[RMDB]
Structure probing data (DMS and 2A3) for a 177-nucleotide construct.
Conditions: 150 mM KOAc, 10 mM MgCl2 and 150 mM bicine (pH 8.5), 24 C.
For 2A3, 4,037 sequencing reads were counted.
RNA sequence: GGGAACGACUCGAGUAGAGUCGAAAAGAUAUGGACCAAUUGGGCUUUUGACGCGAGGUUGUCGGAAACGACAACUCUCGCGAUAAGCCUUAUUGGUCCUAAGUCAAAACAGCUGUUCGCAGCUGAAUCUGAGGACAUAGUUCGCUAUGUCCUCAGAAAAAGAAACAACAACAACAAC
Reactivity to DMS in 0.01 (KOAc 150mM, MgCl2 10mM, bicine 150mM(pH8.5), 24C), signal-to-noise 3, nucleotides 027 to 126: g010a030u000a300u010g000g000a010c010c010a010a020u000u010g000g010g030c000u000u010u010u040g020a250c090g020c000g010a020g000g010u000u010g010u000c000g010g000a120a070a150c010g000a020c000a000a000c010u020c000u000c010g020c000g010a020u010a030a030g010c000c000u000u000a010u010u000g020g010u000c000c000u000a010a050g000u000c030a080a080a150a270c010a000g010c000u000g030u010u030c220g000c010a010g010c020u000g000a100a110
Reactivity to 2A3 in 0.01 (KOAc 150mM, MgCl2 10mM, bicine 150mM(pH8.5), 24C), signal-to-noise 2, nucleotides 027 to 126: g020a010u060a030u120g000g000a000c020c000a000a020u020u030g000g000g000c040u170u110u170u300g300a130c060g000c010g020a000g040g000u000u000g010u020c000g010g010a050a080a050c010g010a000c000a010a000c000u010c010u010c030g020c000g000a000u010a000a000g000c000c000u000u010a000u000u010g000g000u010c010c000u000a000a010g000u000c010a010a000a130a170c000a000g000c010u040g090u180u280c300g010c150a000g000c000u000g020a010a130
DMS adducts were read by reverse transcription with MarathonRT.